[RMDB]
RNA sequence: GGGAACGACUCGAGUAGAGUCGAAAAUGUCACCCAGGCUAGAGUGCAGUAGUGCAGUCAUGGCCCACUGCAGCCUCGACCCCCCUGGGCUCAAGCAAUCCUCCUGCCUUAGCCUCCUGAGUAGCUGGUCUGCCGCUAUAUUCGUAUAGCGGCAGACAAAAGAAACAACAACAACAAC
Reactivity to DMS in 0.01 (KOAc 150mM, MgCl2 10mM, bicine 150mM(pH8.5), 24C), signal-to-noise 1, nucleotides 027 to 126: u000g000u030c140a160c040c000c020a070g030g000c070u010a060g000a050g020u010g020c030a020g030u010a070g030u010g010c030a100g000u030c160a110u000g000g000c020c080c080a030c020u020g000c020a050g040c060c010u000c050g000a300c040c010c040c050c010c000u000g020g000g000c020u000c030a080a110g000c010a060a060u000c080c020u000c050c040u030g020c010c000u060u010a080g000c000c000u010c060c010u000g000a100g030u010a080g000c040u020g000
The data come from the RNA Mapping Database (RMDB), library OK2TRN. An RNA of 177 nucleotides, treated with DMS and read out base by base. For DMS the reverse transcriptase was MarathonRT. The RNA was probed in 150 mM KOAc, 10 mM MgCl2 and 150 mM bicine (pH 8.5) at 24 C.